An RNA of 207 nucleotides, treated with 2A3 and DMS and read out base by base.
2A3 adducts were read by reverse transcription with SuperScript II with manganese.
The data come from the RNA Mapping Database (RMDB), library M2RFPK.
For 2A3, 850 sequencing reads were counted.
RNA sequence: GGGAACGACUCGAGUAGAGUCGAAAAAGUGAGUAUGGCUCGUUACGACGAGCCAUACUCACAACGGUUUUCCUAAAUCGUCGUGAGACGGACCUUGGAAAACCUAGUAUUUAAAUAACUACGUCAAAUUAGCCUAGAUCCUUCGGGAUCUAGGCAACAACACUGAUAUCUUCGGAUAUCAGUGUUGAAAAGAAACAACAACAACAAC
Reactivity to 2A3 in 0.01 (KOAc 150mM, MgCl2 10mM, bicine 150mM(pH8.5), 24C), signal-to-noise 2, nucleotides 027 to 156: a000g000u000g000a000g000u000a000u010g000g020c000u000c020g000u010u050a070c280g000a000c000g000a070g040c000c000a020u000a020c000u010c000a000c000a000a000c000g000g010u000u000u000u010c000c000u040a040a070a090u060c000g020u000c000g030u020g080a140g010a010c020g000g030a060c030c030u040u070g010g000a000a000a000a000c020c000u000a030g000u010a060u090u090u140a080a220a080u150a090a030c090u080a060c060g220u140c220a040a210a160u170u150a060g000c000c000u000a000g010a000u000c000c010u040u100c240g080g000g000a000u000c000u020a000g000g000c000a000a000
Reactivity to DMS in 0.01 (KOAc 150mM, MgCl2 10mM, bicine 150mM(pH8.5), 24C), signal-to-noise 1, nucleotides 027 to 156: a130g020u000g000a000g020u010a010u010g010g000c000u000c000g050u010u000a270c260g000a100c000g050a050g000c010c000a000u000a010c000u010c000a000c010a020a080c120g010g010u000u010u000u000c000c010u000a030a020a020u000c020g010u000c000g020u000g010a300g010a020c000g000g010a040c020c040u020u020g000g000a050a000a010a020c000c010u000a040g010u000a060u000u010u010a130a160a280u000a090a090c090u000a070c080g020u000c100a050a080a140u010u000a140g020c020c000u000a020g030a000u000c000c010u010u000c300g060g040g000a000u000c000u000a010g020g010c000a000a000